[RMDB]
RNA sequence: GGGAACGACUCGAGUAGAGUCGAAAAAACGCUAAGGCGAGGAAAUGUUCAUAGUGUAAGGAGAGCGGGAACUGGAAAACGCCUCGCUUUUUUCCUGUAAAACACCGCAACGCAGGAAAAGCGCAUGAUAAAGGCAAUAGUUCGCUAUUGCCUUUAUAAAAGAAACAACAACAACAAC
Reactivity to DMS in 0.01 (KOAc 150mM, MgCl2 10mM, bicine 150mM(pH8.5), 24C), signal-to-noise 9, nucleotides 027 to 126: a060a060c030g000c020u020a140a090g000g000c000g010a020g000g000a060a070a060u040g010u000u000c040a300u050a040g010u010g010u020a120a130g000g010a150g000a160g020c010g000g010g010a120a050c020u010g000g000a090a060a030a040c070g000c020c000u000c010g000c010u000u000u010u010u000u000c000c000u010g000u010a080a070a080a100c140a170c020c020g010c020a110a090c210g010c010a000g000g000a010a020a040a040g010c020g000c140a050u020g010
Reactivity to 2A3 in 0.01 (KOAc 150mM, MgCl2 10mM, bicine 150mM(pH8.5), 24C), signal-to-noise 2, nucleotides 027 to 126: a000a000c030g000c030u040a070a020g050g000c010g000a020g030g000a090a170a170u190g020u050u020c030a080u100a170g100u100g030u140a040a060g020g010a040g000a030g050c020g000g050g000a020a050c000u000g040g040a020a090a000a020c010g020c000c000u020c010g000c010u000u000u000u000u000u000c000c000u000g000u000a000a030a060a050c100a070c030c000g020c090a090a080c130g000c010a000g000g020a010a010a010a010g010c040g000c020a010u150g020